[RMDB]
RNA sequence: GGGAACGACUCGAGUAGAGUCGAAAACGCGGUGCUCAUACCCAAGCGCCACGGGCCAUCACCCGGUGGCACCAGCAGGCCGGCAACCGCGCGGCUGCCGUGUACCCGCGCGGUGUACACCUCGCCGCGCAUAAUAAAUCUUCGGAUUUAUUAUGCGAAAAGAAACAACAACAACAAC
Reactivity to DMS in 0.01 (KOAc 150mM, MgCl2 10mM, bicine 150mM(pH8.5), 24C), signal-to-noise 6, nucleotides 027 to 126: c070g020c040g020g010u000g020c030u000c070a090u030a120c040c040c030a150a070g010c050g020c010c010a070c040g010g000g010c050c050a030u010c090a130c090c090c160g010g000u000g000g020c000a060c090c050a140g010c070a060g010g000c050c040g000g010c120a080a020c040c020g020c040g000c020g020g000c050u010g000c040c070g000u020g010u010a110c260c000c010g030c060g010c040g010g010u000g000u020a050c120a100c050c030u000c080g010c010c040g000
Reactivity to 2A3 in 0.01 (KOAc 150mM, MgCl2 10mM, bicine 150mM(pH8.5), 24C), signal-to-noise 9, nucleotides 027 to 126: c050g010c020g010g010u030g020c030u050c100a100u210a250c010c010c020a030a020g040c030g010c050c010a020c050g000g020g020c040c030a100u060c030a110c030c030c030g020g020u020g000g000c030a080c050c000a020g050c020a020g020g040c040c020g020g000c020a030a050c010c000g000c000g000c000g000g000c030u100g020c020c040g100u080g040u100a050c000c000c000g010c010g000c030g020g000u000g010u030a030c010a030c000c010u040c040g010c010c000g030